[RMDB]
RNA sequence: GGGAACGACUCGAGUAGAGUCGAAAAGGCGUGAUCAGUGUGGGCGCUUGGGGCAAGUUCCUUGGAAGAGGACAGCAUGGAGGGUGAUACUCCCGUUCAUCCCUGAGUUGCUCGUGCGUACGAUCCGGCUAUGUUCACCCUUCGGGGUGAACAUAGCAAAAGAAACAACAACAACAAC
Reactivity to DMS in 0.01 (KOAc 150mM, MgCl2 10mM, bicine 150mM(pH8.5), 24C), signal-to-noise 1, nucleotides 027 to 126: g020g010c030g020u000g000a000u000c000a150g000u000g020u010g000g000g020c050g000c000u020u010g020g060g010g000c300a060a050g000u010u000c000c000u000u010g020g070a300a060g000a040g020g000a050c000a020g010c080a180u000g020g020a100g010g000g010u010g020a120u010a030c090u010c000c000c010g020u010u000c040a240u000c000c000c010u000g010a040g000u000u050g060c030u010c020g020u020g010c000g040u020a090c160g010a050u000c000c040g000
Reactivity to 2A3 in 0.01 (KOAc 150mM, MgCl2 10mM, bicine 150mM(pH8.5), 24C), signal-to-noise 1, nucleotides 027 to 126: g050g040c040g140u170g000a000u000c010a040g010u000g020u000g040g030g070c000g000c000u010u000g000g000g020g010c030a080a020g090u230u050c010c000u000u030g040g020a040a020g010a020g060g040a010c020a000g080c010a080u170g020g010a020g030g040g000u000g000a060u080a090c050u020c030c010c000g080u100u040c020a050u130c020c000c020u000g000a010g000u040u300g110c000u000c010g010u010g000c000g000u060a010c090g000a000u010c010c010g010